[RMDB]
RNA sequence: GGGAACGACUCGAGUAGAGUCGAAAAGAUAUGGAAGCGCCACCAGCGCGGAUCGGAAACGAUCCGAACUACGCUGUGGAACUACGCUUCCUAAGUCAAAAGAUGCUUCUGUUCGCAGAAGCAUCAACCCUAUAAUCAACUUCGGUUGAUUAUAGGGAAAAGAAACAACAACAACAAC
Reactivity to 2A3 in 0.01 (KOAc 150mM, MgCl2 10mM, bicine 150mM(pH8.5), 24C), signal-to-noise 5, nucleotides 027 to 126: g000a020u060a050u170g010g010a010a010g010c030g030c010c020a060c100c210a040g010c040g010c040g010g000a000u010c000g010g020a070a050a050c020g000a010u000c010c000g010a060a050c110u270a050c060g000c000u010g020u050g040g020a030a040c100u180a030c160g000c000u000u010c000c000u000a070a010g040u020c030a030a030a030a200g010a010u010g010c000u000u010c000u000g080u040u090c290g020c130a000g000a010a000g000c000a000u000c010a010a000
Reactivity to DMS in 0.01 (KOAc 150mM, MgCl2 10mM, bicine 150mM(pH8.5), 24C), signal-to-noise 5, nucleotides 027 to 126: g000a050u000a300u010g010g010a010a020g000c000g010c000c100a040c230c120a020g010c010g000c030g000g010a020u000c000g000g000a100a130a190c040g000a020u000c000c000g020a060a060c120u020a300c030g020c010u000g010u000g000g000a130a080c120u010a260c040g000c000u000u000c000c000u000a020a090g000u000c040a090a100a130a130g000a010u000g000c000u000u000c000u000g010u000u020c290g020c020a010g010a020a020g010c000a000u000c020a040a060
Structure probing data (2A3 and DMS) for a 177-nucleotide construct. Source: RMDB library TTRDES, as collected in RNAgym. Conditions: 150 mM KOAc, 10 mM MgCl2 and 150 mM bicine (pH 8.5), 24 C. DMS adducts were read by reverse transcription with MarathonRT.